[RMDB]
RNA sequence: GGGAACGACUCGAGUAGAGUCGAAAAUUGCGUGCAGCCGAUGCUAGUAAGGAAGCAAAGGCAAUGUAUAUGUAUGUGCCGCGUGCUUCAGAAGUUCGCUACUGGUCUGGUGUUGCUUCCUUCGAUGAUAUCCCGGCGACGGCUGUCAACGAAAUGGCAACUUAGACGCGUUCGCGCGUCUAAGUUGAAAAGAAACAACAACAACAAC
Reactivity to 2A3 in 0.01 (KOAc 150mM, MgCl2 10mM, bicine 150mM(pH8.5), 24C), signal-to-noise 1, nucleotides 027 to 156: u020u100g010c000g000u040g020c010a000g010c000c070g110a080u200g000c030u060a030g060u170a050a040g000g030a000a000g040c000a030a020a020g100g000c000a000a000u050g040u000a090u190a040u300g180u090a120u170g000u030g000c000c000g000c000g000u000g000c010u170u220c020a140g070a190a090g060u030u130c080g000c020u080a070c040u120g120g070u230c110u110g140g000u070g000u050u000g000c000u000u040c050c040u080u060c160g020a060u090g030a020u060a030u210c090c000c000g020g020c030g010a100c000g000g000c000u010g070u040c040a060a080c000g080a000a020a050u140g080g000

An RNA of 207 nucleotides, treated with 2A3 and read out base by base.